[RMDB]
RNA sequence: GGGAACGACUCGAGUAGAGUCGAAAAGAGUUGCCAGAGUGAUCACUCUUCGAUUGAUGUUUUGUAUUUCUCUCUUCUGGCUGAAAAUGACAGGUCCCAUUAUCUUGAACCUAAAAGACAAUUCCACAGAAUCAAUAUUUGCAUCAUUAGCGCCGACCCUAGUUCAUGCAUUCGUGCAUGAACUAGGAAAAGAAACAACAACAACAAC
Reactivity to 2A3 in 0.01 (KOAc 150mM, MgCl2 10mM, bicine 150mM(pH8.5), 24C), signal-to-noise 2, nucleotides 027 to 156: g050a010g060u100u270g060c020c000a030g000a010g050u070g020a050u060c040a000c050u060c050u200u090c100g230a220u090u180g040a060u090g060u090u090u120u120g090u120a140u020u190u010c050u000c010u000c020u120u000c000u010g000g000c000u000g050a090a020a000a070u040g010a020c040a050g030g070u000c000c020c050a050u100u110a120u050c070u040u090g040a080a090c000c000u050a070a030a050a070g050a020c050a060a060u030u120c080c000a040c000a120g120a080a030u120c050a120a100u090a080u200u070u080g020c020a020u040c000a030u150u060a040g010c050g070c040c080g010a080c000
Structure probing data (2A3) for a 207-nucleotide construct. The RNA was probed in 150 mM KOAc, 10 mM MgCl2 and 150 mM bicine (pH 8.5) at 24 C. Values are in units of 0.01, from 0 to 300, in steps of 10. The data come from the RNA Mapping Database (RMDB), library OK3TST.